RNA sequence: GGGAACGACUCGAGUAGAGUCGAAAAUGAUGGCGGGCGCUGGGCUGGUGUCGCCUUGCCUUUCAGAAGGAUUUUGAGCCCGAACGUGUGGUAGCUGCUCCCCAAAGGCCGGGGACCGAGCCACAGCCAGAAAUGCCUGACACAGUCCUGCAGUCAAUAGUAUUACUCGUUUCGACGAGUAAUACUAAAAAGAAACAACAACAACAAC
Reactivity to 2A3 in 0.01 (KOAc 150mM, MgCl2 10mM, bicine 150mM(pH8.5), 24C), signal-to-noise 2, nucleotides 027 to 156: u160g100a070u020g030g030c050g000g020g020c080g000c040u040g020g130g000c030u000g010g080u100g050u080c070g090c010c000u000u070g000c020c010u010u030u000c090a090g040a130a050g000g020a040u080u070u170u230g030a030g000c000c000c000g050a170a090c110g080u130g070u140g120g010u030a010g040c040u080g030c030u040c000c020c000c000a000a100a010g030g000c030c050g000g020g000g000a030c060c070g010a010g000c000c000a110c000a050g040c010c000a030g030a060a200a010u160g000c000c000u000g000a000c000a010c010a020g070u060c010c020u070g020c010a030g030u090c030a040a110
Reactivity to DMS in 0.01 (KOAc 150mM, MgCl2 10mM, bicine 150mM(pH8.5), 24C), signal-to-noise 2, nucleotides 027 to 156: u000g030a120u000g020g000c000g030g180g070c010g050c050u000g000g030g000c000u000g020g020u030g040u000c010g020c020c000u000u000g000c000c010u000u000u000c060a120g010a140a070g050g010a120u000u010u000u010g010a240g020c020c010c040g000a090a100c110g000u000g040u000g030g030u000a100g000c080u000g030c030u000c010c000c020c040a030a120a020g010g000c020c030g030g000g020g000a040c050c040g020a300g020c020c020a070c020a110g010c010c020a090g010a060a060a130u000g030c020c010u000g000a110c010a030c030a120g020u000c010c040u000g000c040a110g010u000c060a080a300